[RMDB]
Overview
Conditions: 150 mM KOAc, 10 mM MgCl2 and 150 mM bicine (pH 8.5), 24 C. The record gives the reactivity of an RNA of 177 nucleotides to 2A3 and DMS.
RNA sequence: GGGAACGACUCGAGUAGAGUCGAAAAGAUAUGGACAGUACGAGCGAGGAUCGGAGGUCUCGGAAACGAGACUCCGGGAGCUUUGUACUGUCCUAAGUCAAAAGCUGCAAACUUCGGUUUGCAGCAACUAUUGAGUUCACUUCGGUGAACUCAAUAGAAAAGAAACAACAACAACAAC
Reactivity to 2A3 in 0.01 (KOAc 150mM, MgCl2 10mM, bicine 150mM(pH8.5), 24C), signal-to-noise 1, nucleotides 027 to 126: g000a000u070a000u110g000g020a020c000a000g020u030a000c000g000a000g010c010g090a300g090g000a070u030c010g040g000a010g180g190u020c000u000c000g020g000a060a030a000c000g000a000g010a000c000u050c010c000g010g000g000a020g000c020u070u070u060g000u000a000c010u000g000u000c000c000u000a000a000g000u000c000a010a000a090a300g020c010u010g000c030a000a010a040c010u090u140c300g180g040u000u010u030g010c010a010g000c000a000a010
Reactivity to DMS in 0.01 (KOAc 150mM, MgCl2 10mM, bicine 150mM(pH8.5), 24C), signal-to-noise 2, nucleotides 027 to 126: g000a040u000a300u000g000g020a000c000a010g010u000a000c000g000a010g000c000g010a130g000g020a040u000c000g010g000a040g010g000u000c000u000c010g010g000a070a060a140c030g000a030g000a090c000u000c000c000g000g010g000a030g010c010u000u020u000g050u000a000c000u000g010u010c000c000u010a000a060g000u000c050a140a090a100a200g020c000u000g010c000a010a030a000c000u010u010c260g040g000u000u000u000g040c000a010g020c000a000a020

Background: For DMS the reverse transcriptase was MarathonRT. For DMS, 2,263 sequencing reads were counted. Source: RMDB library TTRDES, as collected in RNAgym.